[RMDB]
RNA sequence: GGGAACGACUCGAGUAGAGUCGAAAACCCGCCGAGCCGACCCGAAAUGAGAAGCUCUCCUCCUGUGAAGCCCCCUUCCUGGGGCGCUGUGCAGCGAGGCCUCUUGGGCGGCGGCCACGCCGUGGUCCAACCAGGUGUUGUUCGCAACACCUGGUUGAAAAGAAACAACAACAACAAC
Reactivity to DMS in 0.01 (KOAc 150mM, MgCl2 10mM, bicine 150mM(pH8.5), 24C), signal-to-noise 3, nucleotides 027 to 126: c010c000c010g030c200c160g040a100g000c010c010g010a110c010c020c000g000a040a090a080u030g000a030g000a110a090g000c060u040c110u040c010c020u020c010c010u000g010u010g010a140a100g000c000c000c010c010c000u030u040c150c180u040g000g000g000g010c170g000c010u000g000u070g000c000a020g010c190g010a020g000g020c280c020u000c010u000u000g020g000g010c010g000g000c010g010g000c010c040a030c010g020c170c010g020u000g000g010u020c020
Reactivity to 2A3 in 0.01 (KOAc 150mM, MgCl2 10mM, bicine 150mM(pH8.5), 24C), signal-to-noise 6, nucleotides 027 to 126: c010c000c000g000c040c040g070a030g010c010c010g130a300c040c010c020g090a050a120a090u210g010a010g020a110a020g040c050u040c020u020c110c000u020c000c000u020g010u000g040a030a010g000c010c000c020c000c030u040u220c070c130u180g000g000g000g000c030g000c010u030g050u170g010c000a000g000c030g090a000g000g000c000c000u030c000u030u050g020g000g010c000g000g000c000g000g000c000c000a040c040g300c100c130g040u020g000g010u010c020